[RMDB]
RNA sequence: GGGAACGACUCGAGUAGAGUCGAAAACCCUUAGCAUUCGUGCUAAGGGAAAUAACGGUCGGCUCAUGGAGCUAGUCGAAAAUGCUGCUCGACCUUUUGGUAAAAUCUGGCCGUUCGCGGCCAGAAACUGACGCUAUAUGUUCGCAUAUAGCGUCAGAAAAGAAACAACAACAACAAC
Reactivity to 2A3 in 0.01 (KOAc 150mM, MgCl2 10mM, bicine 150mM(pH8.5), 24C), signal-to-noise 2, nucleotides 027 to 126: c000c000c000u000u010a000g000c000a010u000u040c150g060u070g000c010u010a010a000g020g000g020a000a130a000u110a030a020c050g020g000u010c010g040g000c000u020c050a030u050g020g000a020g100c070u090a090g240u250c040g010a030a010a000a000u060g020c080u010g010c050u100c150g020a000c030c000u010u100u030u080g020g030u130a010a040a020a150u030c000u010g010g000c010c010g020u050u070c220g000c000g080g010c000c000a000g000a000a010a010
Reactivity to DMS in 0.01 (KOAc 150mM, MgCl2 10mM, bicine 150mM(pH8.5), 24C), signal-to-noise 2, nucleotides 027 to 126: c000c000c000u000u000a000g000c000a030u000u010c190g020u010g010c000u000a020a010g010g000g000a050a020a040u000a050a060c170g000g020u000c000g010g010c000u010c010a020u000g000g020a300g010c030u000a030g010u040c030g000a100a130a070a040u000g030c210u000g000c020u000c000g040a020c020c010u000u000u000u000g010g010u000a040a080a080a110u000c020u010g000g000c010c010g050u000u010c070g000c000g050g000c000c000a000g010a000a050a040